[RMDB]
RNA sequence: GGGAACGACUCGAGUAGAGUCGAAAAAGCGUCGACGAACCUUCCAACCUUCCAAAGCAGCAAAAGCUGAACCAUCCAACCUUCCAAUCUACUCGAGAGGAGGAGGAGGAGGAGGAGGAGGAAUUAAUGAGAAAAGAUGAUUCGUCAUCUUUUCUCAAAAAGAAACAACAACAACAAC
Reactivity to 2A3 in 0.01 (KOAc 150mM, MgCl2 10mM, bicine 150mM(pH8.5), 24C), signal-to-noise 3, nucleotides 027 to 126: a000g070c050g070u060c010g050a080c000g020a080a060c000c000u040u030c020c010a090a080c010c010u040u020c010c020a110a060a090g000c030a010g000c000a120a080a140a130g020c010u030g000a050a040c000c020a050u030c020c000a030a060c020c020u050u000c010c000a050a020u000c010u050a060c010u020c030g030a020g010a010g040g050a030g020g020a060g030g040a040g030g040a080g030g080a030g020g060a040g020g070a040g010g050a030a020u140u090a110a060
Reactivity to DMS in 0.01 (KOAc 150mM, MgCl2 10mM, bicine 150mM(pH8.5), 24C), signal-to-noise 4, nucleotides 027 to 126: a050g010c080g030u000c040g010a120c080g000a070a120c030c010u000u000c040c020a100a120c040c040u010u010c030c030a050a120a140g010c020a040g010c030a070a070a110a090g020c040u000g010a060a120c050c030a110u000c020c020a060a080c050c020u000u000c020c020a160a170u000c010u000a040c030u000c020g000a020g010a190g010g010a080g010g010a190g000g000a110g010g000a160g000g010a080g010g000a140g000g000a160g010g010a270a080u010u010a020a100
An RNA of 177 nucleotides, treated with 2A3 and DMS and read out base by base. It was measured as part of the RMDB library M2PK90. The DMS profile rests on 3,929 reads. 2A3 adducts were read by reverse transcription with SuperScript II with manganese.